Overview
The record gives the reactivity of an RNA of 177 nucleotides to DMS. It was measured as part of the RMDB library 15KREP.
RNA sequence: GGGAACGACUCGAGUAGAGUCGAAAACUAUUGAGAAGGAAAUAACUGGCACUCCCUUAGCCAUCCGAGUGGACGUUGUCCUCCUUCGGAUGCCCAGGUCGGACCGCGGGGAGGUGGAGAUGCCAUGGGAUACUUCAUUGUUCGCAAUGAAGUAUCCAAAAGAAACAACAACAACAAC
Reactivity to DMS in 0.01 (KOAc 150mM, MgCl2 10mM, bicine 150mM(pH8.5), 24C), signal-to-noise 3, nucleotides 027 to 126: c030u010a110u010u010g000a100g010a080a050g000g000a010a130a060u010a050a200c120u000g010g010c000a030c010u000c000c010c020u000u000a110g020c300c030a030u000c000c010g000a040g030u010g020g020a030c020g020u010u000g000u010c060c020u000c070c140u030u000c010g010g010a020u000g010c030c010c010a180g000g020u010c150g020g000a300c020c030g000c100g000g000g000g000a090g010g010u020g030g000a050g000a090u000g000c030c010a020u010g000